Notes
Structure probing data (DMS and 2A3) for a 177-nucleotide construct. For 2A3 the reverse transcriptase was SuperScript II with manganese. The data come from the RNA Mapping Database (RMDB), library OK1LIB.

RNA sequence: GGGAACGACUCGAGUAGAGUCGAAAAGAAAUUGUGAAAGAGUAAUGGAGUUCAAUAAUCUGCAUGAGAUAUCUAACGUUGAUGAAUUAUCUCACUAUAUCGAAUGCAGACGAACUUCACAAAGAAAGGCAAUUGAUUACUUCGGUAAUCAAUUGCCAAAAGAAACAACAACAACAAC
Reactivity to DMS in 0.01 (KOAc 150mM, MgCl2 10mM, bicine 150mM(pH8.5), 24C), signal-to-noise 1, nucleotides 027 to 126: g050a000a050a090u000u010g000u000g000a030a000a080g000a040g020u050a140a270u050g010g040a050g090u000u060c010a200a140u000a090a200u000c000u000g000c000a000u000g000a300g000a000u000a060u000c250u040a090a020c220g090u070u000g040a090u000g000a150a030u100u010a000u000c000u010c000a060c120u000a060u000a000u000c000g000a170a000u040g000c000a110g000a000c100g000a000a000c000u000u000c000a000c070a010a130a010g000a020a060a120
Reactivity to 2A3 in 0.01 (KOAc 150mM, MgCl2 10mM, bicine 150mM(pH8.5), 24C), signal-to-noise 1, nucleotides 027 to 126: g100a000a020a050u160u080g100u060g040a220a040a100g210a000g030u180a000a110u120g020g000a030g000u000u090c000a010a010u120a300a060u050c000u020g000c000a000u000g000a000g000a000u040a000u000c090u040a000a210c180g030u160u070g040a050u090g040a000a300u100u060a130u040c060u000c000a000c000u000a000u000a000u010c000g020a020a000u040g000c000a000g000a000c000g000a000a000c000u000u000c000a000c040a020a050a000g070a080a010a000
The 2A3 profile rests on 479 reads.